Description: Structure probing data (DMS and 2A3) for a 177-nucleotide construct. 2A3 adducts were read by reverse transcription with SuperScript II with manganese. It was measured as part of the RMDB library OK2TRN.
[RMDB]
RNA sequence: GGGAACGACUCGAGUAGAGUCGAAAAUUCGCCAAAACAGUCCCGGAGGACAAGAAGGUGGCAGUGCGGCAGCGGCACGUCCCUGUGGCGAAGGCCGACCGCGCACCGGCUGCGUGUGCAGGCAGCGGCAAGGGUAACAUUUCGAUGUUACCCUUGCAAAAGAAACAACAACAACAAC
Reactivity to DMS in 0.01 (KOAc 150mM, MgCl2 10mM, bicine 150mM(pH8.5), 24C), signal-to-noise 3, nucleotides 027 to 126: u000u000c030g000c010c000a050a120a090a140c190a120g000u000c010c010c090g010g020a160g000g000a070c030a040a120g020a100a100g000g010u000g010g030c060a090g000u000g030c020g040g020c110a110g030c050g000g000c010a060c070g010u000c020c060c100u000g000u010g010g000c010g000a050a050g000g020c050c020g000a190c070c040g020c010g010c030a060c050c010g020g010c040u000g000c040g010u000g030u010g000c070a130g010g000c030a030g020c060g010
Reactivity to 2A3 in 0.01 (KOAc 150mM, MgCl2 10mM, bicine 150mM(pH8.5), 24C), signal-to-noise 2, nucleotides 027 to 126: u020u020c020g090c030c000a010a040a070a100c030a030g040u010c030c030c030g090g140a210g060g010a030c020a050a080g160a040a060g110g010u080g040g000c070a020g060u060g040c020g020g000c040a090g120c050g010g000c020a010c080g030u020c020c000c030u140g140u190g010g000c040g010a010a000g090g030c000c010g030a060c010c000g020c010g000c000a010c010c000g140g000c010u030g000c040g060u170g100u120g080c070a100g060g000c000a010g020c000g040
Conditions: 150 mM KOAc, 10 mM MgCl2 and 150 mM bicine (pH 8.5), 24 C.